[RMDB]
RNA sequence: GGGAACGACUCGAGUAGAGUCGAAAAGAAAGCUUGAUCCAUAUCAAAGUAACCAUCGUGUACGCUUAAGAUAUGAACAUGGUAUGUUUGACAUAAUUUGAUGAGUUUUAAUGCAUUUUUCAGAUUAGACAAGAGGGUUUUUCGAAACCCUCUUGUCAAAAGAAACAACAACAACAAC
Reactivity to DMS in 0.01 (KOAc 150mM, MgCl2 10mM, bicine 150mM(pH8.5), 24C), signal-to-noise 1, nucleotides 027 to 126: g000a090a050a070g000c000u000u040g010a080u000c180c030a020u000a060u070c000a180a030a010g000u010a030a040c040c010a150u000c300g080u030g000u000a030c080g000c070u000u000a080a150g000a030u030a000u000g000a110a040c030a030u000g030g000u000a160u090g000u060u010u000g000a090c170a260u050a030a090u030u000u000g010a010u000g040a060g000u000u010u000u000a130a080u010g010c090a050u000u000u000u000u000c000a080g010a060u000u000a060
Reactivity to 2A3 in 0.01 (KOAc 150mM, MgCl2 10mM, bicine 150mM(pH8.5), 24C), signal-to-noise 2, nucleotides 027 to 126: g080a010a040a000g040c070u070u080g120a020u070c000c000a000u020a000u030c010a020a020a020g060u050a050a140c000c000a070u200c080g030u150g060u190a030c110g010c070u140u000a000a060g010a030u020a090u040g000a010a050c030a050u040g090g080u150a140u100g060u020u080u050g070a050c050a040u060a120a090u010u000u060g000a030u010g050a050g020u040u050u030u300a200a110u210g020c010a030u000u000u000u000u220c010a010g000a040u000u190a000
The record gives the reactivity of an RNA of 177 nucleotides to DMS and 2A3. The reactions ran in a buffer of 150 mM KOAc, 10 mM MgCl2 and 150 mM bicine (pH 8.5), at 24 C. 2A3 adducts were read by reverse transcription with SuperScript II with manganese. The data come from the RNA Mapping Database (RMDB), library OK1LIB. For DMS the reverse transcriptase was MarathonRT.